[RMDB]
RNA sequence: GGGAACGACUCGAGUAGAGUCGAAAAGAUAUGGACGCGGCUGCACUGGAGGAGGAUCGGAAACGAUCCUCUACCCACCCAGUGAACUACAGCUACGUCCUAAGUCAAACGGUGCUUCGGCACCGAACAUAAGGAGAGACUUCGGUCUCUCCUUAUGAAAAGAAACAACAACAACAAC
Reactivity to 2A3 in 0.01 (KOAc 150mM, MgCl2 10mM, bicine 150mM(pH8.5), 24C), signal-to-noise 2, nucleotides 027 to 126: g060a060u160a140u280g000g000a010c000g020c020g030g000c000u020g000c000a020c020u010g010g010a030g000g020a000g030g000a010u010c000g020g010a020a060a050c000g000a000u000c020c010u000c000u010a000c010c010c010a010c020c000c000a040g000u010g000a030a040c100u220a040c130a010g000c000u010a010c010g000u000c000c000u020a120a040g070u040c090a130a080a100c010g000g000u000g020c010u070u110c290g120g000c000a020c000c000g000a020a000
Reactivity to DMS in 0.01 (KOAc 150mM, MgCl2 10mM, bicine 150mM(pH8.5), 24C), signal-to-noise 4, nucleotides 027 to 126: g010a100u000a280u000g000g000a030c000g030c000g020g000c000u000g000c000a010c000u000g000g000a170g020g000a010g010g010a010u000c000g020g010a070a080a210c000g010a000u000c010c000u000c000u010a000c030c060c090a300c110c010c010a020g020u000g000a060a040c080u010a300c020a010g000c000u000a030c000g000u000c000c000u000a000a040g000u000c090a070a090a200c020g010g010u000g010c000u000u020c170g040g000c010a010c000c010g000a020a070
Chemical mapping of a 177-nucleotide RNA with 2A3 and DMS. The RNA was probed in 150 mM KOAc, 10 mM MgCl2 and 150 mM bicine (pH 8.5) at 24 C.